[RMDB]
RNA sequence: GGGAACGACUCGAGUAGAGUCGAAAACGGAGCGGCCGAGCACCGGCAUGCCGAACGCGAGAUUCUGCAGAUCGAUCGUACCGACGACGGCGAUGCCGUAGCGAUGCCAGUCGAUCCAGUAGCCGGACACUAGUACGCAGUUCGCUGCGUACUAGUGAAAAGAAACAACAACAACAAC
Reactivity to 2A3 in 0.01 (KOAc 150mM, MgCl2 10mM, bicine 150mM(pH8.5), 24C), signal-to-noise 5, nucleotides 027 to 126: c040g010g000a040g030c020g020g000c040c020g050a050g000c010a020c030c000g010g020c000a010u050g000c000c000g050a130a040c040g030c040g050a040g020a130u140u070c060u220g070c080a060g040a160u060c040g040a040u060c010g020u080a120c050c060g090a130c040g010a000c000g040g000c090g130a070u090g000c000c000g020u010a020g040c050g060a060u050g010c000c010a000g020u020c000g000a020u010c010c010a040g060u070a020g050c030c020g020g020a010
Reactivity to DMS in 0.01 (KOAc 150mM, MgCl2 10mM, bicine 150mM(pH8.5), 24C), signal-to-noise 5, nucleotides 027 to 126: c080g000g000a090g010c020g010g010c000c040g010a170g020c030a090c100c010g000g010c020a060u000g000c020c010g010a090a060c080g000c020g010a230g000a060u000u000c040u020g000c130a130g000a070u000c050g000a100u010c120g010u000a160c150c020g010a060c060g010a150c020g000g010c000g020a060u010g010c000c020g000u000a080g000c120g010a080u000g010c010c060a060g000u000c010g000a060u000c010c030a080g010u000a110g020c020c010g000g020a300
An RNA of 177 nucleotides, treated with 2A3 and DMS and read out base by base. It was measured as part of the RMDB library OK2TRN. Conditions: 150 mM KOAc, 10 mM MgCl2 and 150 mM bicine (pH 8.5), 24 C. For 2A3, 8,846 sequencing reads were counted. DMS adducts were read by reverse transcription with MarathonRT.